About this RNA: Source: RMDB library M2RFOK, as collected in RNAgym. An RNA of 207 nucleotides, treated with 2A3 and DMS and read out base by base. Values are in units of 0.01, from 0 to 300, in steps of 10. The reactions ran in a buffer of 150 mM KOAc, 10 mM MgCl2 and 150 mM bicine (pH 8.5), at 24 C. The 2A3 profile rests on 1,405 reads. For DMS, 4,323 sequencing reads were counted. For 2A3 the reverse transcriptase was SuperScript II with manganese.
[RMDB]
RNA sequence: GGGAACGACUCGAGUAGAGUCGAAAACGGUAUUGGUCAAGGCUAUACCGACAGCGCACCUUCAAAAGGGCGCUUAAUCCCCGGCCAAGCGCCGAAAUAUGAAUAGACAGCGCUGGGCUGGUAGGGCAAAACAUGGCGAUCUUCGGAUCGCCAUGAAGUUAAGGUAAUGGUUCGCCAUUACCUUAACAAAAGAAACAACAACAACAAC
Reactivity to 2A3 in 0.01 (KOAc 150mM, MgCl2 10mM, bicine 150mM(pH8.5), 24C), signal-to-noise 2, nucleotides 027 to 156: c000g000g000u020a030u100u240g030g000u070c080a100a120g120g000c010u010a000u010a010c000c000g000a010c030a030g000c010g000c070a300c070c000u060u090c080a070a120a080a010g000g010g000c000g000c010u000u000a000a010u000c010c000c010c000g000g000c010c000a030a000g000c000g020c020c040g060a050a030a010u290a090u120g120a040a050u030a100g080a010c020a020g000c010g000c000u020g000g020g010c000u010g030g000u040a040g010g040g040c050a000a000a030a100c000a000u000g010g000c000g000a000u000c000u050u030c130g060g020a000u010c010g000c000c000a010u000g000a010a000
Reactivity to DMS in 0.01 (KOAc 150mM, MgCl2 10mM, bicine 150mM(pH8.5), 24C), signal-to-noise 2, nucleotides 027 to 156: c000g000g030u000a000u000u010g120g020u000c050a120a160g040g010c010u000a090u000a030c010c010g000a110c090a050g010c050g000c000a080c010c010u000u010c130a100a160a090a110g010g000g010c000g020c020u000u010a030a070u000c000c030c000c000g000g030c010c020a030a050g020c030g040c000c020g020a030a060a100u000a270u000g010a120a210u000a200g020a280c120a050g000c010g040c000u000g010g010g010c000u000g010g000u000a020g010g010g020c100a050a070a080a220c000a000u000g020g010c000g020a020u000c000u000u010c300g020g010a010u000c010g000c000c000a000u000g010a020a070